RNA sequence: GGGAACGACUCGAGUAGAGUCGAAAACCAUAGGGUUCGCCCUAUGGAAACCAUAACUACGUCCACAUAACCGACGCGUAUCCCAGUUUCAUAGUAUUUUCUGGAAAUCCCUCAGUUCGCUGAGGGACAUAAUACUCAGGUUCGCCUGAGUAUUAUGAAAAGAAACAACAACAACAAC
Reactivity to 2A3 in 0.01 (KOAc 150mM, MgCl2 10mM, bicine 150mM(pH8.5), 24C), signal-to-noise 9, nucleotides 027 to 126: c000c000a000u000a000g040g020g000u030u040c190g110c010c000c000u020a000u020g010g010a070a020a010c020c010a080u120a110a060c100u130a050c050g030u010c030c030a080c020a160u130a150a080c070c030g030a020c020g030c020g040u040a170u100c020c010c020a030g020u050u090u090c120a130u120a100g110u070a200u110u140u030u040c040u040g040g040a050a090a090u030c000c000c000u000c000a010g020u040u060c120g010c080u000g000a000g000g000g000a000
Reactivity to DMS in 0.01 (KOAc 150mM, MgCl2 10mM, bicine 150mM(pH8.5), 24C), signal-to-noise 9, nucleotides 027 to 126: c010c000a010u000a000g000g010g020u000u010c220g020c010c010c010u000a010u000g010g000a040a060a140c040c030a110u010a060a080c090u010a060c060g000u000c010c060a100c100a100u010a090a090c150c130g000a030c040g010c040g010u000a060u000c040c010c010a140g010u000u010u000c090a100u010a080g010u000a070u000u000u000u000c020u000g000g010a110a090a220u000c000c000c000u000c000a000g010u010u000c200g020c000u000g010a010g000g010g010a000
This 177-nucleotide RNA was probed chemically with 2A3 and DMS.
It was measured as part of the RMDB library RFMREP.
Reactivities are given for positions 27 through 126.
The RNA was probed in 150 mM KOAc, 10 mM MgCl2 and 150 mM bicine (pH 8.5) at 24 C.
The 2A3 profile rests on 14,070 reads.
For DMS the reverse transcriptase was MarathonRT.